Structure probing data (DMS and 2A3) for a 177-nucleotide construct. Source: RMDB library OK2TRN, as collected in RNAgym.

[RMDB]
RNA sequence: GGGAACGACUCGAGUAGAGUCGAAAAGCGUUCUUCCGCACCGAUACUGUGCAGAUGGAUGCAGGCACACUGGAUGCCAAUACUCGGUAUAAAGCGGGGACGUGUUAUCGCUCCGAAACGGUUUGUCUGUGGGGAAUUGUUUCGACAAUUCCCCACAAAAAGAAACAACAACAACAAC
Reactivity to DMS in 0.01 (KOAc 150mM, MgCl2 10mM, bicine 150mM(pH8.5), 24C), signal-to-noise 1, nucleotides 027 to 126: g050c000g000u000u000c000u020u020c000c000g000c000a110c010c120g010a040u010a020c110u000g010u000g010c000a040g000a270u010g000g000a050u000g010c040a080g000g010c080a160c150a190c040u040g200g000a220u000g000c000c000a070a120u000a000c160u000c020g040g000u020a250u000a050a100a160g010c010g020g000g000g000a030c050g020u000g000u000u010a080u010c040g000c010u000c050c010g040a050a100a150c290g000g000u000u000u000g000u000c050
Reactivity to 2A3 in 0.01 (KOAc 150mM, MgCl2 10mM, bicine 150mM(pH8.5), 24C), signal-to-noise 1, nucleotides 027 to 126: g000c010g080u090u000c000u250u030c010c000g080c010a020c010c040g000a020u010a060c010u100g040u110g010c000a010g030a130u040g120g050a040u000g060c080a030g000g100c030a030c020a030c180u120g110g040a110u060g070c040c000a000a000u010a030c060u000c010g000g000u000a100u070a190a110a010g000c010g000g020g040g040a010c080g040u080g020u130u120a080u130c040g000c030u040c060c000g100a110a130a020c080g000g150u000u010u080g110u060c120
For DMS the reverse transcriptase was MarathonRT.
Values are in units of 0.01, from 0 to 300, in steps of 10.
The reactions ran in a buffer of 150 mM KOAc, 10 mM MgCl2 and 150 mM bicine (pH 8.5), at 24 C.